[RMDB]
Source: RMDB library RNAMAK, as collected in RNAgym. Chemical mapping of a 207-nucleotide RNA with DMS and 2A3. The reactions ran in a buffer of 150 mM KOAc, 10 mM MgCl2 and 150 mM bicine (pH 8.5), at 24 C. DMS adducts were read by reverse transcription with MarathonRT. For DMS, 2,827 sequencing reads were counted. 2A3 adducts were read by reverse transcription with SuperScript II with manganese.
RNA sequence: GGGAACGACUCGAGUAGAGUCGAAAAGAUAUGGAAUCUGGACGGACAUCGAUCGGUACGUAACAAGUGUCGGAAACGACACCGCCCGUACCGGGAGUCCGGUACAGAUUCCUAAGUCAAAUCCUAAGACUUGAUGUUCGCAUCAAGUCUUAGGAAACAUGAUGUUUACCUUCGGGUAAACAUCAUGAAAAGAAACAACAACAACAAC
Reactivity to DMS in 0.01 (KOAc 150mM, MgCl2 10mM, bicine 150mM(pH8.5), 24C), signal-to-noise 1, nucleotides 027 to 156: g010a100u010a160u010g000g010a040a010u000c000u000g010g000a120c010g020g000a040c010a220u000c090g050a130u000c010g010g050u020a010c000g040u010a080a120c090a100a030g010u010g010u000c000g030g000a230a090a300c010g020a040c010a000c000c000g020c250c190c000g030u000a010c010c010g000g020g000a080g010u000c000c000g030g010u000a070c010a000g010a030u000u010c000c000u000a010a060g010u000c090a070a090a180u000c010c000u000a010a020g010a000c000u000u000g000a020u000g020u000u010c300g050c030a050u000c000a010a020g000u000c000u000u000a000g000g000a000a020a110
Reactivity to 2A3 in 0.01 (KOAc 150mM, MgCl2 10mM, bicine 150mM(pH8.5), 24C), signal-to-noise 3, nucleotides 027 to 156: g020a020u050a040u150g010g010a000a000u000c000u010g010g010a030c010g010g000a000c040a300u150c070g170a140u110c030g020g000u010a010c000g040u110a140a140c060a180a080g010u000g000u000c010g010g050a090a080a020c020g000a000c000a000c000c000g030c000c030c010g000u010a000c000c000g000g000g000a000g000u010c010c000g000g030u120a020c010a000g000a000u000u000c000c000u000a030a000g000u010c010a030a030a080u000c000c000u000a000a000g000a000c000u010u000g000a000u020g040u110u140c300g010c120a000u000c000a010a000g000u010c000u000u000a000g000g000a020a000a000